[RMDB]
RNA sequence: GGGAACGACUCGAGUAGAGUCGAAAACGCCUAAUCUUCGGAUUAGGCGAAAAGAGGACGUGGAGGAGGCUUCAAAGGAAACGACGAUCACUCCCGAACAGUAAAGACUGGAGUUCGCUCCAGUCAACUCAAAAAGAGAGUUCGCUCUCUUUUUGAGAAAAGAAACAACAACAACAAC
Reactivity to 2A3 in 0.01 (KOAc 150mM, MgCl2 10mM, bicine 150mM(pH8.5), 24C), signal-to-noise 4, nucleotides 027 to 126: c010g000c000c000u010a010a010u000c010u020u050c200g060g000a000u000u000a000g010g000c010g000a000a000a000a010g080a040g060g040a040c060g030u080g020g020a030g010g020a010g030g080c050u050u040c070a100a090a030g060g030a080a090a050c040g070a010c020g000a040u050c030a020c160u010c000c010c010g020a050a010c020a020g030u120a070a200a020g000a000c000u000g000g010a000g020u060u090c170g030c090u010c000c000a000g000u010c000a000a000
Reactivity to DMS in 0.01 (KOAc 150mM, MgCl2 10mM, bicine 150mM(pH8.5), 24C), signal-to-noise 4, nucleotides 027 to 126: c010g020c000c000u000a000a010u000c000u000u020c180g020g010a020u000u000a010g010g010c000g000a010a020a050a120g000a120g000g000a080c100g010u000g020g000a140g000g010a080g010g000c090u000u000c020a040a130a210g010g000a090a070a090c060g010a170c160g010a050u000c130a150c060u010c000c010c000g000a190a070c090a060g010u020a060a090a110g010a010c000u000g010g010a020g020u010u010c230g010c000u000c000c010a010g000u000c000a020a070